Chemical mapping of a 207-nucleotide RNA with 2A3. For 2A3, 618 sequencing reads were counted. Values cover nucleotides 27 to 156.
[RMDB]
RNA sequence: GGGAACGACUCGAGUAGAGUCGAAAAAUCCGUGGAUAUCGGGUGCGCACGGCUCCUCCUCCGGCUGUUCUCCUUCACAGCUAUGACCCAUGCGCCGCACAGGCAGUGUCCCGCUUCGUGUGCAAAAAAAACCGCCAGUACUUCGGUACUGGCGGAACGUAUCUGUUUGGUUCGCCAAACAGAUACGAAAAGAAACAACAACAACAAC
Reactivity to 2A3 in 0.01 (KOAc 150mM, MgCl2 10mM, bicine 150mM(pH8.5), 24C), signal-to-noise 1, nucleotides 027 to 156: a000u050c010c000g020u040g030g070a110u060a090u300c030g010g000g030u040g060c040g000c010a030c000g000g000c050u050c020c020u000c000c030u020c030c040g030g000c020u050g010u060u050c070u040c070c030u120u190c100a020c000a040g000c000u020a080u250g040a100c000c050c000a010u110g030c000g020c040c050g000c040a020c020a030g070g070c000a000g030u030g020u020c000c020c010g010c010u060u040c070g100u000g020u020g010c000a070a040a000a000a000a000a040a050c030c020g000c000c000a000g000u000a000c000u020u130c240g120g000u000a000c000u010g000g010c000g000g000a000a000